[RMDB]
RNA sequence: GGGAACGACUCGAGUAGAGUCGAAAAGCUAGGCAUUUCGAUGCCUAGCGAGCGCAGAGUCUAUGCAUCUCUGAAUCUCACAACAGCCGUGUCUAUGCGUGGGAGUAUCCCUCUUCGGAGGGAUAAAGCCGUUAUGUUCUUUCGAGAACAUAACGGCAAAAGAAACAACAACAACAAC
Reactivity to 2A3 in 0.01 (KOAc 150mM, MgCl2 10mM, bicine 150mM(pH8.5), 24C), signal-to-noise 2, nucleotides 027 to 126: g010c000u000a000g020g020c010a010u070u050u070c240g130a000u000g000c000c000u000a000g000c000g010a020g000c090g040c000a000g000a010g030u000c050u030a210u170g070c050a100u050c020u030c000u010g040a090a120u040c000u000c020a030c020a100a060c000a030g030c020c100g240u110g060u150c040u060a090u140g080c050g010u050g030g010g000a040g010u000a000u010c000c020c000u010c030u050u010c180g120g000a010g020g000g010a000u020a000a010a000
Reactivity to DMS in 0.01 (KOAc 150mM, MgCl2 10mM, bicine 150mM(pH8.5), 24C), signal-to-noise 2, nucleotides 027 to 126: g010c000u000a010g000g000c000a020u000u000u030c150g000a010u000g020c010c000u000a000g000c000g010a070g010c300g000c010a050g050a090g000u010c090u000a120u010g010c140a080u000c040u000c000u000g000a140a100u010c000u000c020a060c080a060a160c090a030g010c060c150g000u000g010u010c020u010a050u000g000c220g000u000g000g000g000a100g030u000a020u000c000c000c000u000c000u000u000c160g010g000a040g000g000g020a010u000a000a050a080